RNA sequence: GGGAACGACUCGAGUAGAGUCGAAAAGAUUUCGAAGGUAUCGACAGCUUAAAGACACCGUAUAACGAUGAGCUGAGUUUUGCGCUCCAGCAACAGGUGAUGCAGAGCACAUGGCGCUUACAGUAUGUAGCACCAGUAGAUUCGUCUACUGGUGCUAAAAAGAAACAACAACAACAAC
Reactivity to DMS in 0.01 (KOAc 150mM, MgCl2 10mM, bicine 150mM(pH8.5), 24C), signal-to-noise 4, nucleotides 027 to 126: g020a110u000u000u000c040g010a070a110g000g010u010a080u000c040g000a110c090a050g000c020u010u010a050a070a140g010a140c060a040c030c020g010u010a100u010a070a090c060g010a060u010g010a140g010c020u000g020a090g010u000u010u000u000g010c070g000c050u010c050c080a060g000c040a040a060c110a130g030g020u000g000a110u000g010c060a120g000a050g000c040a040c080a050u000g010g010c060g000c070u000u000a040c090a080g010u000a070u010g010
Reactivity to 2A3 in 0.01 (KOAc 150mM, MgCl2 10mM, bicine 150mM(pH8.5), 24C), signal-to-noise 2, nucleotides 027 to 126: g030a030u080u040u080c040g020a080a030g120g060u040a050u080c040g020a040c030a000g030c010u090u150a070a120a000g040a030c010a050c000c030g050u090a080u070a180a050c040g070a090u070g030a000g000c000u000g050a040g100u070u060u070u100g090c100g000c000u000c000c040a070g020c010a060a080c020a070g070g040u040g030a040u060g030c070a000g010a000g050c000a000c010a090u060g070g000c030g000c060u070u070a070c020a050g100u190a110u260g150
An RNA of 177 nucleotides, treated with DMS and 2A3 and read out base by base. 2A3 adducts were read by reverse transcription with SuperScript II with manganese. It was measured as part of the RMDB library OK2TRN. In probing experiments dimethyl sulfate is read out at A N1 and C N3, which are open when not base-paired.